[RMDB]
The record gives the reactivity of an RNA of 177 nucleotides to DMS and 2A3. Values cover nucleotides 27 to 126. For DMS, 1,351 sequencing reads were counted. For 2A3 the reverse transcriptase was SuperScript II with manganese.
RNA sequence: GGGAACGACUCGAGUAGAGUCGAAAAGCAGGGUCGUAAAAUGCUGAUGGCUCUUCUUUCUGAUAAUGCCUAUCUCAAAUGGGCGCGUGUUGAAGGUAAGGACGGAUUUGUCAGUGUAGAGCUACAAGCUACAUUCUCAGUUCGCUGAGAAUGUAGCAAAAGAAACAACAACAACAAC
Reactivity to DMS in 0.01 (KOAc 150mM, MgCl2 10mM, bicine 150mM(pH8.5), 24C), signal-to-noise 2, nucleotides 027 to 126: g000c070a030g000g000g040u000c030g000u020a040a060a070a090u010g000c070u010g010a150u010g020g010c010u000c050u000u000c040u000u000u000c030u000g020a020u010a040a060u000g000c000c000u000a060u000c080u000c160a080a080a070u000g010g000g010c030g030c160g040u000g010u000u000g000a070a060g020g010u030a070a070g010g000a050c070g000g000a160u010u010u000g010u000c010a000g020u010g000u000a020g000a070g030c020u000a040c220a040a110
Reactivity to 2A3 in 0.01 (KOAc 150mM, MgCl2 10mM, bicine 150mM(pH8.5), 24C), signal-to-noise 1, nucleotides 027 to 126: g060c040a000g000g050g010u030c030g060u090a070a140a030a050u120g020c000u010g040a130u120g070g060c030u000c000u040u000c020u030u100u070c020u000g040a050u060a080a030u070g030c000c000u050a030u030c080u020c080a080a130a080u050g000g010g000c030g000c010g020u130g100u080u050g090a050a040g040g000u050a020a130g000g040a030c010g030g000a050u050u030u080g000u010c030a020g010u020g030u080a030g000a030g040c020u050a030c030a030a000